[RMDB]
RNA sequence: GGGAACGACUCGAGUAGAGUCGAAAAGCGCUCAAAGGUUCUCUCAGUACGGUCGGAAAUCGUACGUAGAGUGUAAAGGCAAAAGAGAGCUUGAUUGCAAGACAUACAGGUCGAGCAAGGAUGAAAAUCGGACUUAGUGAUCCGGUGGUUCUGCGUAAAUUUAAUCGUAUUUCGAUACGAUUAAAUUAAAAGAAACAACAACAACAAC
Reactivity to DMS in 0.01 (KOAc 150mM, MgCl2 10mM, bicine 150mM(pH8.5), 24C), signal-to-noise 4, nucleotides 027 to 156: g020c020g010c010u000c020a080a120a090g010g010u000u000c000u000c010u000c060a130g020u000a000c010g040g130u020c030g030g010a030a300a010u010c010g020u010a020c010g000u000a080g010a080g010u000g020u010a050a090a130g030g000c070a050a080a090a140g000a060g000a040g030c000u010u000g010a120u000u000g020c000a070a230g010a080c040a140u000a110c160a190g030g000u000c020g000a300g010c060a060a080g000g000a120u000g000a060a030a070a020u000c030g010g010a040c020u000u000a170g040u000g010a070u000c020c000g000g020u000g010g020u000u000c020u000g010c070g040u000a060
Reactivity to 2A3 in 0.01 (KOAc 150mM, MgCl2 10mM, bicine 150mM(pH8.5), 24C), signal-to-noise 4, nucleotides 027 to 156: g000c030g000c020u020c040a080a080a020g080g010u090u040c010u020c000u000c030a010g000u010a000c000g010g050u070c040g080g040a120a240a060u050c000g000u000a010c010g030u070a020g010a030g020u050g010u090a120a120a060g080g000c030a040a030a060a020g050a010g000a000g000c000u040u030g090a100u020u020g020c020a020a010g020a020c010a010u290a090c060a070g020g180u010c000g000a000g000c000a000a020g060g030a060u120g090a060a030a040a010u030c000g000g010a000c040u110u140a070g070u140g140a150u030c010c020g000g000u010g000g050u070u030c020u070g050c030g070u100a070